An RNA of 207 nucleotides, treated with 2A3 and read out base by base.
High 2A3 reactivity points to a flexible backbone, as in loops and unpaired stretches.
The 2A3 profile rests on 1,026 reads.
The data come from the RNA Mapping Database (RMDB), library OK3TST.
[RMDB]
RNA sequence: GGGAACGACUCGAGUAGAGUCGAAAACAAAAACACACAAGUACUCUAGCAAAAAUACUAGUACCAUUGACCUAGACACUAAAGGGUGAUAUAAUGACUAUGGGAUUCGUCCCACACCUCCUAUUAUCAUUUUUUUGCUGUACCUCUUGGCACCCUGUGAUAGCAACGUGUUCGCACGUUGCUAUCAAAAAGAAACAACAACAACAAC
Reactivity to 2A3 in 0.01 (KOAc 150mM, MgCl2 10mM, bicine 150mM(pH8.5), 24C), signal-to-noise 2, nucleotides 027 to 156: c050a000a020a010a070a000c050a000c020a000c000a040a020g060u110a060c030u040c070u160a030g050c030a050a070a040a010a020u130a140c020u030a010g040u030a020c000c060a120u130u150g020a050c020c020u040a030g030a050c020a010c120u100a050a100a100g020g030g010u030g020a010u060a010u060a220a160u150g050a010c070u080a140u110g000g010g010a010u040u050c100g050u020c030c000c000a000c010a010c010c000u090c020c030u040a100u110u160a110u090c100a110u000u060u030u020u030u110u060g040c020u000g020u050a040c010c000u030c030u080u020g030g000c030a030c000c000c000u040g060